[RMDB]
RNA sequence: GGGAACGACUCGAGUAGAGUCGAAAAAAGAUAUGGACGUCCCAAGAAGCAGCAUGUCGUUUGACGGAGCUUCGGAAACGAAGCUCCCGAGACAUGAACUACUGCGUAAGGGACGUCCUAAGUCAAAUCAAGGAGUGUAGUUCGCUACACUCCUUGAAAAAGAAACAACAACAACAAC
Reactivity to DMS in 0.01 (KOAc 150mM, MgCl2 10mM, bicine 150mM(pH8.5), 24C), signal-to-noise 4, nucleotides 027 to 126: a130a070g010a020u000a300u010g000g000a010c000g020u000c000c010c000a020a090g020a150a300g000c000a000g000c020a010u000g010u000c010g020u010u010u020g010a280c300g000g000a000g000c000u000u010c000g010g000a060a070a110c000g000a020a010g010c010u000c000c000c010g000a080g010a000c000a000u000g000a050a040c130u020a250c010u020g000c000g000u010a140a300g000g000g000a000c000g010u000c000c000u000a000a060g010u000c030a060a100a150
Reactivity to 2A3 in 0.01 (KOAc 150mM, MgCl2 10mM, bicine 150mM(pH8.5), 24C), signal-to-noise 1, nucleotides 027 to 126: a000a010g040a040u030a030u070g000g000a010c000g000u000c000c000c000a000a000g070a060a010g000c010a000g000c020a000u010g000u010c050g080u120u290u300g040a010c010g000g000a000g000c010u000u000c000g010g010a060a070a000c010g000a000a000g020c000u010c000c010c010g020a030g000a020c000a000u020g000a000a040c120u300a060c030u060g000c030g040u010a010a020g000g010g010a000c000g000u010c000c000u000a000a000g000u000c000a000a000a070